[RMDB]
RNA sequence: GGGAACGACUCGAGUAGAGUCGAAAAGAUAUGGACCGGUAGGGAGCGUAUCGGAAACGAUACCGCGAAGAACUACCCGGUCCUAAGUCAAAACGUGUAAGUGUAGCUUCGGCUACACUUACACGAAGAACUAUCUAAUGUUCGCAUUAGAUAGUUCAAAAGAAACAACAACAACAAC
Reactivity to 2A3 in 0.01 (KOAc 150mM, MgCl2 10mM, bicine 150mM(pH8.5), 24C), signal-to-noise 5, nucleotides 027 to 126: g020a010u060a030u140g000g010a010c000c010g000g000u010a010g020g020g020a040g020c000g000u010a000u000c000g020g040a090a050a010c020g000a000u010a020c180c120g010c010g180a300a030g010a020a020c000u000a020c040c050c030g000g000u000c000c000u010a030a000g010u010c040a030a010a070a130c010g000u010g000u020a010a010g000u010g000u000a010g010c010u070u060c300g050g000c000u000a000c000a000c000u000u000a000c000a010c000g000a000a000
Reactivity to DMS in 0.01 (KOAc 150mM, MgCl2 10mM, bicine 150mM(pH8.5), 24C), signal-to-noise 5, nucleotides 027 to 126: g000a050u000a300u000g000g000a010c000c000g000g000u000a010g000g000g000a090g050c010g010u000a000u000c000g000g000a070a090a160c000g000a010u010a010c080c130g060c000g000a090a110g000a090a150c000u000a010c100c050c020g010g000u010c000c000u000a010a080g010u000c060a060a060a090a170c010g000u000g000u000a000a000g000u000g010u010a000g010c000u000u010c260g020g000c000u000a010c010a000c000u000u000a000c000a000c000g000a020a070
The data come from the RNA Mapping Database (RMDB), library TTRDEL. Structure probing data (2A3 and DMS) for a 177-nucleotide construct. For DMS the reverse transcriptase was MarathonRT.